[RMDB]
RNA sequence: GGGAACGACUCGAGUAGAGUCGAAAAACGUGCCACUGAAGAGGCGUCUAAGCAGUCUUAUGCUAUUGCCACCAUCAAAGAAAUUGUUGGUGAGCGCCAACUAUUACUUGUGUGGGAGGCUGGCAAGGCUUACCUUAUGGUUCGCCAUAAGGUAAGCAAAAGAAACAACAACAACAAC
Reactivity to DMS in 0.01 (KOAc 150mM, MgCl2 10mM, bicine 150mM(pH8.5), 24C), signal-to-noise 3, nucleotides 027 to 126: a080c110g030u010g020c000c030a100c110u000g020a110a120g010a080g000g020c010g010u000c100u010a080a130g010c100a070g010u010c060u000u020a090u010g000c010u000a070u000u000g010c020c010a130c030c000a010u000c080a050a010a060g010a090a030a020u000u000g010u000u000g000g000u000g020a120g030c260g000c000c010a000a010c020u000a040u000u000a070c030u000u000g010u010g030u000g000g010g010a070g020g010c050u000g000g000c030a070a100g020
Reactivity to 2A3 in 0.01 (KOAc 150mM, MgCl2 10mM, bicine 150mM(pH8.5), 24C), signal-to-noise 4, nucleotides 027 to 126: a000c050g050u060g000c030c010a060c050u110g040a130a010g060a060g070g030c040g030u030c080u100a060a040g020c030a020g050u000c030u050u140a100u090g000c010u040a070u100u210g000c000c000a010c010c000a010u050c050a040a080a040g040a010a060a030u030u030g020u000u010g020g020u090g150a110g060c120g020c030c000a010a000c000u020a000u040u030a040c010u040u030g030u010g010u020g130g050g040a130g040g000c010u010g000g000c010a010a030g060